[RMDB]
RNA sequence: GGGAACGACUCGAGUAGAGUCGAAAAUCACCCCGUAAAACGCUGAAUUUAUAUAGUCGCAAACGACGAAACUUACGCUCUGGCAGCCUAACGGCCGGCCAGACACUACAACGGUUCGCAGAUGGGCCGGGGGCGUCAAAACCCUGUAGUGUCACUCGCGUAUAUAGGACUUCGGUCCUAUAUACGCAAAAGAAACAACAACAACAAC
Reactivity to 2A3 in 0.01 (KOAc 150mM, MgCl2 10mM, bicine 150mM(pH8.5), 24C), signal-to-noise 2, nucleotides 027 to 156: u110c010a100c020c000c010c000g040u040a140a080a000a000c070g030c030u040g090a070a060u060u300u020a190u080a040u060a160g010u040c010g000c160a170a300a090c100g060a000c030g010a160a030a010c030u130u140a050c030g030c100u060c040u020g000g010c000a000g020c000c000u090a090a010c040g010g020c000c000g090g000c020c000a020g000a000c000a000c000u000a000c000a020a000c000g000g000u010u000c020g000c100a080g070a300u200g050g000g000c000c000g000g000g000g000g020c010g000u090c030a040a040a030a040c000c010c010u020g000u000a000g000u000g020u020c000a050c040u080c110
This 207-nucleotide RNA was probed chemically with 2A3. The 2A3 profile rests on 962 reads. Conditions: 150 mM KOAc, 10 mM MgCl2 and 150 mM bicine (pH 8.5), 24 C. Reactivities are given for positions 27 through 156.